[RMDB]
RNA sequence: GGGAACGACUCGAGUAGAGUCGAAAAGGAAUGAACGAUGGUGAAGAAAGGAGGCUGCUCUGGGGCCCUGCCCCAAGGGCGAGUUCACGCCUCUGAGAGGAAGAGAUGGGCUUGGGCUCCUUUUUUCAGAUGCCUGCCUUCCCUCCCCCCUUCCACACUGGCUAUAUUAUUUCGAUAAUAUAGCCAGAAAAGAAACAACAACAACAAC
Reactivity to 2A3 in 0.01 (KOAc 150mM, MgCl2 10mM, bicine 150mM(pH8.5), 24C), signal-to-noise 1, nucleotides 027 to 156: g000g030a020a070u140g010a090a030c060g200a280u230g010g020u100g030a070a040g030a060a050a030g000g010a010g110g090c080u060g010c040u000c070u060g010g000g010g000c040c050c180u240g010c030c000c010c010a060a140g010g000g000c010g000a010g010u030u080c060a020c010g010c000c000u020c030u040g110a150g000a020g060g110a140a080g040a040g050a160u060g040g000g000c020u060u090g000g070g030c040u100c000c000u010u010u000u010u050u100c060a080g000a120u070g020c010c010u010g040c000c000u000u010c010c000c000u000c020c010c000c000c000c000u060u060c020c030a080c000a000